Structure probing data (DMS and 2A3) for a 207-nucleotide construct. Values are in units of 0.01, from 0 to 300, in steps of 10. The data come from the RNA Mapping Database (RMDB), library OK3TST. Conditions: 150 mM KOAc, 10 mM MgCl2 and 150 mM bicine (pH 8.5), 24 C. For DMS, 4,198 sequencing reads were counted.
RNA sequence: GGGAACGACUCGAGUAGAGUCGAAAACGAUCAGUACGUUCGCGUACUGAUCGAAGCUACUGGAGACAGUAGCCAGUCGCAGACCUUGUUUGGCGGUAACAAGGAACACAUAAAGUAGGCAGGUCUUUAUGACUGCGACAACCGCCAUCCUGCCUUAUAGAUUGAAAGGAUUCGUCCUUUCAAUCUAAAAAGAAACAACAACAACAAC
Reactivity to DMS in 0.01 (KOAc 150mM, MgCl2 10mM, bicine 150mM(pH8.5), 24C), signal-to-noise 2, nucleotides 027 to 156: c040g000a010u010c000a020g000u000a000c010g010u010u000c280g050c020g020u000a000c000u020g010a010u000c000g000a020a020g020c000u000a000c030u000g000g000a300g000a300c000a000g020u000a030g030c000c040a070g020u000c020g000c000a040g010a300c040c010u000u010g010u010u020u020g030g000c050g000g020u000a060a040c000a050a030g010g010a070a010c010a100c020a020u000a010a010a010g000u000a010g010g010c000a040g000g000u010c030u000u000u010a040u000g010a140c030u000g060c000g060a070c040a100a180c060c030g010c110c070a080u000c010c010u000g010c000c000u000u020a210
Reactivity to 2A3 in 0.01 (KOAc 150mM, MgCl2 10mM, bicine 150mM(pH8.5), 24C), signal-to-noise 2, nucleotides 027 to 156: c010g000a000u000c000a000g010u000a000c000g010u000u090c210g000c000g050u000a000c000u000g000a000u000c000g000a010a010g000c010u010a000c000u000g000g010a030g020a010c000a000g010u010a000g000c000c020a010g010u010c000g000c000a000g010a120c000c000u000u010g000u020u040u070g070g020c010g020g030u050a010a000c000a010a000g010g010a020a000c010a000c000a010u020a000a000a000g010u020a050g020g000c000a000g000g010u000c000u000u000u000a010u010g020a020c000u000g000c000g000a000c010a020a070c060c030g030c010c000a000u040c000c000u010g000c000c000u010u050a050